Structure probing data (2A3) for a 177-nucleotide construct. The reactions ran in a buffer of 150 mM KOAc, 10 mM MgCl2 and 150 mM bicine (pH 8.5), at 24 C. 2A3 is a SHAPE reagent: it acylates the 2'-hydroxyl of flexible nucleotides of all four kinds. Source: RMDB library OK1LIB, as collected in RNAgym.

RNA sequence: GGGAACGACUCGAGUAGAGUCGAAAAUUGGCAGGAUUGCUGGAAUAUGAUGCCGCGCCAGAGCCCAUGCUUGCGCUUGUGGAUACACUUCCACUUCUGGCUCUCUGAUUCUCUCUGGCAUCUUGCCGUAGGCGCGGCACUUCGGUGCCGCGCCUACAAAAGAAACAACAACAACAAC
Reactivity to 2A3 in 0.01 (KOAc 150mM, MgCl2 10mM, bicine 150mM(pH8.5), 24C), signal-to-noise 2, nucleotides 027 to 126: u080u090g000g030c010a020g000g080a150u170u290g000c000u010g010g080a110a100u100a090u190g050a020u140g090c120c130g000c010g030c000c000a030g000a050g040c060c010c000a010u160g070c090u100u100g030c050g010c000u120u060g000u000g010g030a000u110a120c150a110c180u060u030c000c000a000c000u080u030c070u060g010g000c000u000c020u000c020u080g070a140u110u010c040u010c000u000c000u050g000g020c000a010u000c010u000u000g000c000c000